[RMDB]
RNA sequence: GGGAACGACUCGAGUAGAGUCGAAAAACCUUAUUUUGAGAAGCUGAGGGACUUGGCCCAUAGAAGCUUCAGCAACCGACUUUAAAUAGCACGGUGCUAAUACCAACGAGCAACUCGAAUGAUAAGUAAAACGUUGACAAGUUCGCUUGUCAACGAACCUUCACUUUAACUUCGGUUAAAGUGAAGGAAAAGAAACAACAACAACAAC
Reactivity to DMS in 0.01 (KOAc 150mM, MgCl2 10mM, bicine 150mM(pH8.5), 24C), signal-to-noise 1, nucleotides 027 to 156: a130c080c030u010u020a120u000u000u000u000g000a080g010a040a220g000c060u020g020a150g020g000g030a030c150u000u000g000g000c010c000c010a140u030a160g000a060a080g000c000u000u000c030a120g000c000a030a020c000c000g030a120c000u000u000u000a150a100a020u020a030g040c000a080c030g060g020u000g000c030u000a050a050u000a030c080c030a060a150c170g030a170g010c030a110a200c010u020c000g010a080a040u000g000a080u020a100a080g010u000a080a050a060a080c020g030u000u000g030a040c000a000a000g040u000u010c300g030c000u000u000g020u010c020a000a020c020g020a000a030
Reactivity to 2A3 in 0.01 (KOAc 150mM, MgCl2 10mM, bicine 150mM(pH8.5), 24C), signal-to-noise 2, nucleotides 027 to 156: a000c060c000u110u070a290u080u170u170u160g140a070g000a010a020g000c000u010g020a030g000g000g020a050c000u000u020g020g010c000c000c000a080u110a170g010a000a000g000c000u000u000c000a000g000c000a000a030c000c000g040a010c000u140u100u150a180a200a260u170a120g000c010a010c030g010g000u000g000c000u000a010a010u040a090c000c000a040a000c080g020a020g130c060a080a070c050u070c130g110a140a060u170g070a080u100a220a010g060u110a070a150a000a010c010g020u010u000g000a000c000a000a000g010u030u060c140g040c180u000u000g000u000c000a000a000c000g000a000a000